[RMDB]
An RNA of 170 nucleotides, treated with DMS and 2A3 and read out base by base. Source: RMDB library 15KLIB, as collected in RNAgym. For DMS the reverse transcriptase was MarathonRT. For 2A3 the reverse transcriptase was SuperScript II with manganese. For DMS, 78,806 sequencing reads were counted. High 2A3 reactivity points to a flexible backbone, as in loops and unpaired stretches. Values cover nucleotides 27 to 129. The reactions ran in a buffer of 150 mM KOAc, 10 mM MgCl2 and 150 mM bicine (pH 8.5), at 24 C.
RNA sequence: GGGAACGACUCGAGUAGAGUCGAAAAGAAGUCUCCCGCACGGGUCCUCUUCCUAGGUCCGGAGUCGAUCUCCAUCUGAUCCGUCCGGGCCCUCUUCGUCGGGGGAGCUCCCUCCCCGUCCUUCCCUACGCAACGGAGUUCGCUCCGUUGAAAAGAAACAACAACAACAAC
Reactivity to DMS in 0.01 (KOAc 150mM, MgCl2 10mM, bicine 150mM(pH8.5), 24C), signal-to-noise 6, nucleotides 027 to 129: g030a060a060g020u020c040u010c030c000c030g000c160a120c090g000g000g000u030c050c020u050c020u040u020c010c040u000a110g000g020u000c000c000g040g010a050g030u070c230g000a030u020c020u010c160c150a180u050c180u060g000a050u000c050c190g050u020c000c000g020g030g050c060c020c050u020c010u050u050c040g040u010c050g010g000g010g000g000a050g000c070u010c020c020c010u020c000c000c000c000g050u000c020c030u010u010c000c000c000u020a090c140g020
Reactivity to 2A3 in 0.01 (KOAc 150mM, MgCl2 10mM, bicine 150mM(pH8.5), 24C), signal-to-noise 9, nucleotides 027 to 129: g120a060a010g090u010c000u010c030c000c000g020c040a040c030g010g000g040u080c020c020u070c060u120u060c030c040u070a050g000g010u000c020c010g010g010a020g100u240c060g020a010u010c030u070c090c080a260u080c150u170g000a010u000c020c060g080u000c000c000g020g000g000c000c000c000u060c020u130u120c030g080u030c010g010g000g000g000g010a020g020c010u040c010c000c000u030c000c000c000c000g020u040c010c000u010u010c000c000c010u030a040c070g000